[RMDB]
RNA sequence: GGGAACGACUCGAGUAGAGUCGAAAAGAUUUAAACAGAUGGAGAUACACAAAUGUUUGAAUCCCAGUAACAAAAAUCCUGGUAUCUCCGGUAUACAGUAGUGCAGAUACUGUAUUUUUAAUGCUCCUUAGGUUUUCCAUCUUCGGAUGGAAAACAAGUAGUAAUAAUGGUUCGCCAUUAUUACUACAAAAGAAACAACAACAACAAC
Reactivity to DMS in 0.01 (KOAc 150mM, MgCl2 10mM, bicine 150mM(pH8.5), 24C), signal-to-noise 2, nucleotides 027 to 156: g000a090u010u000u020a030a020a050c020a190g030a160u020g010g000a030g030a060u000a030c010a220c120a100a080a090u000g010u000u000u000g010a050a070u000c010c030c030a140g020u010a140a180c060a010a090a100a180a080u010c100c030u000g040g030u000a030u000c010u010c020c000g020g000u010a040u000a010c000a020g040u000a000g020u010g020c130a260g020a180u000a020c000u010g000u000a000u000u030u010u000u000a070a200u000g010c000u000c020c000u000u000a130g020g000u020u010u000u000c010c000a000u000c000u010u010c280g040g020a030u000g000g000a000a000a000a000c010a040a050
Reactivity to 2A3 in 0.01 (KOAc 150mM, MgCl2 10mM, bicine 150mM(pH8.5), 24C), signal-to-noise 4, nucleotides 027 to 156: g010a010u020u020u080a040a070a010c020a020g110a130u130g040g000a020g020a020u020a030c070a010c010a160a190a100u090g020u030u050u060g020a020a020u040c030c030c020a050g100u150a090a080c080a060a090a050a010a040u060c020c040u060g010g000u010a010u000c000u000c000c000g010g010u030a010u010a010c010a010g010u020a010g050u040g230c060a020g040a210u010a010c000u010g010u000a020u010u080u010u000u070a120a090u090g040c030u100c040c010u080u120a050g050g050u010u000u010u000c000c000a000u000c010u010u040c130g100g000a000u000g000g000a000a000a000a000c000a000a010